[RMDB]
RNA sequence: GGGAACGACUCGAGUAGAGUCGAAAACGCCUGCGCUCUGGAAGAGCCUUCCAUCUCAACAACACUUCCGAGGCGACCUGGACCACGCAAGAGCGGCUACGGAUCUCUCAGGUCAGCACGUAGUGUGCCAUCCUGACGGCUUCGGCCGUCAGGAUGGAAAAGAAACAACAACAACAAC
Reactivity to 2A3 in 0.01 (KOAc 150mM, MgCl2 10mM, bicine 150mM(pH8.5), 24C), signal-to-noise 1, nucleotides 027 to 126: c070g040c010c000u040g010c040g000c040u020c020u060g000g110a110a040g030a070g030c000c010u040u050c020c000a200u050c060u010c060a060a230c010a040a030c020a060c040u140u070c050c040g030a140g070g000c020g010a020c000c000u000g000g020a010c020c000a010c040g020c040a170a070g050a050g110c000g020g000c020u090a060c080g060g050a170u030c040u000c010u030c070a020g000g010u010c020a040g020c010a010c020g050u050a030g050u010g030u030g060